Record summary: Structure probing data (2A3 and DMS) for a 207-nucleotide construct. Source: RMDB library M2RFPK, as collected in RNAgym. Conditions: 150 mM KOAc, 10 mM MgCl2 and 150 mM bicine (pH 8.5), 24 C. For DMS the reverse transcriptase was MarathonRT.
[RMDB]
RNA sequence: GGGAACGACUCGAGUAGAGUCGAAAAGUAUCCCUAGAUGAUAAAACACCGCACAUGGCUCGUAAGAGCGGUUAAAUUAGCAAGUAAUGCAAAUUACGCGAGCUAACGCAUGGCCUAGGCUCGUUAGAAAAGGGAGAAUCCUUCGGGAUUCUCCCAAGUUGAGACCAAAGUUCGCUUUGGUCUCAACAAAAGAAACAACAACAACAAC
Reactivity to 2A3 in 0.01 (KOAc 150mM, MgCl2 10mM, bicine 150mM(pH8.5), 24C), signal-to-noise 2, nucleotides 027 to 156: g060u030a070u070c010c000c000u000a030g060a170u170g040a050u160a080a130a020a040c050a020c000c000g020c020a040c020a110u110g120g000c030u000c050g040u080a130a040g020a030g140c030g020g000u010u090a000a130a110u060u090a010g020c070a070a090g060u110a110a060u070g030c050a070a070a070u080u100a060c040g000c000g000a010g000c000u010a030a000c020g000c100a160u250g130g010c000c030u000a010g000g000c000u000c000g010u000u040a050g050a040a100a000a050g000g000g000a010g000a000a000u000c000c030u000u040c120g010g000g000a000u000u000c000u000c000c000c000a000a000
Reactivity to DMS in 0.01 (KOAc 150mM, MgCl2 10mM, bicine 150mM(pH8.5), 24C), signal-to-noise 1, nucleotides 027 to 156: g000u000a010u000c000c020c000u000a130g000a130u000g000a210u000a100a070a110a190c040a110c040c080g040c000a100c120a140u000g020g000c000u000c030g050u000a160a120g030a040g000c000g000g000u000u010a020a060a130u000u000a100g030c020a060a120g000u000a070a040u000g010c090a080a070a080u010u000a040c030g000c040g010a110g070c010u000a030a060c080g000c050a130u000g020g040c020c010u030a200g010g030c050u000c020g000u000u000a080g010a020a060a120a170g030g000g000a000g000a010a000u000c000c000u010u010c290g100g020g030a030u000u000c000u010c000c000c030a000a000